[RMDB]
RNA sequence: GGGAACGACUCGAGUAGAGUCGAAAACCGCGAGGAGUGGGCGGGAAAGGCGACAGUGGAAGACCGAUCCUGGACAACAGAGGCAGAGUUGUGGCUAUUGUUCUAGGAGGUGCAAACGAGGGCACGCACUGUGUUGAAGAUUCGUCUUCAACACAGUAAAAGAAACAACAACAACAAC
Reactivity to 2A3 in 0.01 (KOAc 150mM, MgCl2 10mM, bicine 150mM(pH8.5), 24C), signal-to-noise 4, nucleotides 027 to 126: c010c000g020c060g040a050g010g050a140g040u240g010g030g110c100g020g000g040a060a110a060g070g010c030g030a020c020a020g030u060g030g060a070a030g100a110c010c020g010a020u040c010c020u000g010g000a010c010a050a010c020a040g060a060g130g000c030a010g060a060g280u170u120g040u050g100g000c010u010a010u080u060g030u060u010c020u030a020g000g020a030g010g040u030g010c020a030a050a020c050g030a060g020g030g000c030a010c050g010c010
Reactivity to DMS in 0.01 (KOAc 150mM, MgCl2 10mM, bicine 150mM(pH8.5), 24C), signal-to-noise 6, nucleotides 027 to 126: c030c010g010c110g000a210g010g010a160g020u010g010g000g020c100g020g000g000a070a120a120g010g010c070g010a070c100a160g020u000g000g010a080a270g000a070c040c020g000a140u000c020c010u010g000g000a030c030a030a040c090a040g000a060g010g000c010a050g010a120g010u010u010g030u010g010g010c010u000a080u010u000g000u010u000c020u000a030g020g000a050g010g010u000g000c040a070a080a080c090g010a130g020g000g000c060a070c090g010c140

Structure probing data (2A3 and DMS) for a 177-nucleotide construct. DMS (dimethyl sulfate) methylates the pairing face of unpaired adenines and cytosines. DMS adducts were read by reverse transcription with MarathonRT. The reactions ran in a buffer of 150 mM KOAc, 10 mM MgCl2 and 150 mM bicine (pH 8.5), at 24 C. For DMS, 7,036 sequencing reads were counted.